Chemical mapping of a 207-nucleotide RNA with DMS and 2A3. The RNA was probed in 150 mM KOAc, 10 mM MgCl2 and 150 mM bicine (pH 8.5) at 24 C. For DMS the reverse transcriptase was MarathonRT. For 2A3, 6,965 sequencing reads were counted. The data come from the RNA Mapping Database (RMDB), library OK3TST.
RNA sequence: GGGAACGACUCGAGUAGAGUCGAAAAUAUUGAGGGCUAUUGCCAAAAGAUGUGGACUAUCAUAACUAUACCCUUACUAUUUCUGAGUGCAUAUGAAUGUGGGGCAAAGAUAGCAGCAGUAGUUCAGGGUGAUAACCAAGCCAUAGCUAUAACCAAGCAUACAAAUAUCGUUCGCGAUAUUUGUAUGAAAAGAAACAACAACAACAAC
Reactivity to DMS in 0.01 (KOAc 150mM, MgCl2 10mM, bicine 150mM(pH8.5), 24C), signal-to-noise 3, nucleotides 027 to 156: u010a090u000u010g000a080g030g030g040c020u010a040u000u010g010c020c050a080a100a100a180g030a100u000g010u010g030g020a110c060u010a070u000c030a090u000a080a120c080u000a160u000a050c040c000c020u000u000a080c080u000a110u000u000u000c020u030g020a190g040u000g050c060a090u010a110u010g050a070a060u010g030u000g010g020g040g020c030a040a080a100g010a080u000a060g030c060a090g020c060a050g020u000a050g010u000u000c070a100g000g020g000u000g020a050u010a050a060c030c000a040a150g020c000c050a070u000a060g010c010u000a070u010a060a100c030c020a030a230g000
Reactivity to 2A3 in 0.01 (KOAc 150mM, MgCl2 10mM, bicine 150mM(pH8.5), 24C), signal-to-noise 7, nucleotides 027 to 156: u160a040u050u100g040a090g000g040g000c020u020a030u060u100g030c020c020a030a020a060a040g110a040u120g020u070g080g030a060c050u050a040u120c040a060u060a160a010c040u070a050u080a150c010c000c000u020u060a030c030u040a080u060u080u030c050u050g070a050g070u110g040c040a060u070a070u200g080a120a040u080g040u050g010g000g020g010c010a040a040a020g050a060u070a030g020c020a000g000c000a010g010u040a000g010u040u060c040a010g050g030g010u030g030a050u050a090a020c040c030a020a010g000c000c010a050u060a020g000c000u050a030u040a170a000c010c020a040a010g040